The record gives the reactivity of an RNA of 177 nucleotides to 2A3 and DMS.
RNA sequence: GGGAACGACUCGAGUAGAGUCGAAAAAAUGAAUGAAAUGCAUUCUUUUAUGUGAAAAUACAAAAAGAAUAAAUGUCCUGCAGGUGAAUGGGGCUGUAGCAAUCUUAUUUAGGAUGAAAGUCUGAUUAAUGUAUUAGUUCUUCGGAACUAAUACAUUAAAAGAAACAACAACAACAAC
Reactivity to 2A3 in 0.01 (KOAc 150mM, MgCl2 10mM, bicine 150mM(pH8.5), 24C), signal-to-noise 1, nucleotides 027 to 126: a000a000u140g070a080a020u040g000a170a000a040u030g000c020a020u000u000c000u030u010u100u020a300u040g010u000g060a250a250a080a120u260a080c020a000a000a000a000a000g020a020a000u030a000a090a050u030g000u000c000c000u050g030c010a020g070g210u160g100a100a100u150g010g000g000g000c020u010g030u030a010g010c010a020a020u000c000u010u040a100u140u160u010a020g090g000a040u030g090a130a000a030g080u070c000u000g050a110u060u000
Reactivity to DMS in 0.01 (KOAc 150mM, MgCl2 10mM, bicine 150mM(pH8.5), 24C), signal-to-noise 2, nucleotides 027 to 126: a090a030u010g020a070a120u020g010a080a080a080u000g010c140a040u000u000c000u000u020u000u000a080u030g010u020g000a090a050a140a150u000a020c020a010a010a010a020a030g010a000a020u010a090a170a070u000g010u000c010c000u000g010c050a050g010g030u010g030a110a080u010g020g000g000g000c020u000g010u000a090g020c080a060a080u000c040u010u000a050u010u000u000a100g030g010a040u000g000a190a020a120g010u000c010u000g000a180u000u000
Values are in units of 0.01, from 0 to 300, in steps of 10. The RNA was probed in 150 mM KOAc, 10 mM MgCl2 and 150 mM bicine (pH 8.5) at 24 C.